The record gives the reactivity of an RNA of 207 nucleotides to DMS and 2A3. It was measured as part of the RMDB library M2RFPK. For 2A3, 10,162 sequencing reads were counted.
RNA sequence: GGGAACGACUCGAGUAGAGUCGAAAAGUUUAUGCAAAGGCACUUCGCAAUGUGUGCUCAAACAUUGCUUAUUCAAACACGCUUCACAAUGUGAGACAAAGAAACAUUGUUAUAAGAGCUAAUGUUUACCACGCCUAAAGGUUCGCCUUUAGGCGAACCUCCAUAGCUAGUUCGCUAGCUAUGGAGGAAAAGAAACAACAACAACAAC
Reactivity to DMS in 0.01 (KOAc 150mM, MgCl2 10mM, bicine 150mM(pH8.5), 24C), signal-to-noise 3, nucleotides 027 to 156: g020u010u000u000a040u010g000c000a070a210a160g010g010c010a030c020u000u000c150g020c110a100a110u020g000u000g010u000g020c030u000c030a130a240a060c010a010u000u000g020c010u000u000a110u000u020c060a100a080a080c050a060c100g000c020u000u000c100a060c010a040a020u000g020u000g000a200g030a290c070a100a090a180g030a180a140a030c010a030u000u000g010u000u010a100u010a050a090g000a040g030c030u000a070a090u000g010u000u000u000a070c040c030a130c010g000c010c000u000a010a020a040g020g030u000u010c300g030c030c010u000u000u000a060g050g000c010g000a000a040
Reactivity to 2A3 in 0.01 (KOAc 150mM, MgCl2 10mM, bicine 150mM(pH8.5), 24C), signal-to-noise 9, nucleotides 027 to 156: g030u070u150u150a120u150g050c060a090a070a060g090g000c010a010c020u090u080c090g020c090a060a070u080g010u000g030u020g030c070u090c170a050a050a010c000a010u000u020g000c000u070u120a160u140u150c090a020a060a020c050a010c110g030c010u100u120c070a000c000a020a020u010g010u020g020a060g080a070c120a090a170a020g050a010a050a000c000a000u000u010g030u080u100a170u050a200a090g010a000g010c010u070a100a040u050g010u020u010u020a090c050c040a050c040g010c000c000u000a000a000a000g050g000u030u090c190g120c040c010u000u000u000a000g010g000c000g000a000a000

Record summary: For DMS, 4,791 sequencing reads were counted.